RNA sequence: GGGAACGACUCGAGUAGAGUCGAAAAUCUUGGGAAGGUGCCAGGUGAAGCGGUAGACGACGGUGCCCGUGUCCUCGGCAUACUUCGAGCUGAGGAUCUGCGCGUCCAGGUGGGUCGCCUGCAGACCGCCUCGACGCAGCUUCGGCUGCGUCGAGGCAAAAGAAACAACAACAACAAC
Reactivity to 2A3 in 0.01 (KOAc 150mM, MgCl2 10mM, bicine 150mM(pH8.5), 24C), signal-to-noise 1, nucleotides 027 to 126: u090c050u050u030g060g000g000a210a050g080g000u030g060c010c000a050g000g000u010g120a230a100g000c010g080g030u060a040g000a000c060g010a000c090g050g140u070g000c000c000c000g030u050g000u080c000c000u100c050g010g000c080a110u170a210c130u100u100c130g050a000g080c030u030g000a050g050g000a000u000c080u000g080c130g000c000g000u000c000c000a040g050g000u100g070g090g000u070c000g110c000c000u050g020c060a010g000a020c000c160

Source: RMDB library OK1LIB, as collected in RNAgym. Chemical mapping of a 177-nucleotide RNA with 2A3. The reactions ran in a buffer of 150 mM KOAc, 10 mM MgCl2 and 150 mM bicine (pH 8.5), at 24 C. For 2A3, 417 sequencing reads were counted. Values cover nucleotides 27 to 126.